[RMDB]
This 207-nucleotide RNA was probed chemically with 2A3.
RNA sequence: GGGAACGACUCGAGUAGAGUCGAAAAAAUCUCACCUGCUCAUCUAUUGCAAUAGAGGACUCAGAAGUCAUUUCACAGAACUUAUCAAUGAUAAAGGACAACACUGUUAUGUUUCCUGGAACCAAAGCCUAUGAAGAGGACAUACCAGUUGGUGAGGCUUGGAUACUCGUUUCGACGAGUAUCCAAGAAAAGAAACAACAACAACAAC
Reactivity to 2A3 in 0.01 (KOAc 150mM, MgCl2 10mM, bicine 150mM(pH8.5), 24C), signal-to-noise 1, nucleotides 027 to 156: a000a000u000c010u010c010a040c000c020u020g060c000u020c020a080u010c040u120a130u020u170g040c070a110a000u040a050g170a000g040g020a010c000u020c130a090g000a120a010g060u010c040a050u130u240u090c080a150c010a040g110a110a090c000u000u110a040u180c050a240a220u110g010a000u130a120a070a020g090g000a010c000a040a010c000a040c040u040g060u100u110a040u010g010u000u010u040c020c000u030g040g190a090a080c000c120a010a070a200g120c050c000u090a090u110g020a030a170g050a050g180g000a010c000a000u080a000c000c000a000g000u010u050g040g020u030g000a010g000g000
2A3 is a SHAPE reagent: it acylates the 2'-hydroxyl of flexible nucleotides of all four kinds.
For 2A3 the reverse transcriptase was SuperScript II with manganese.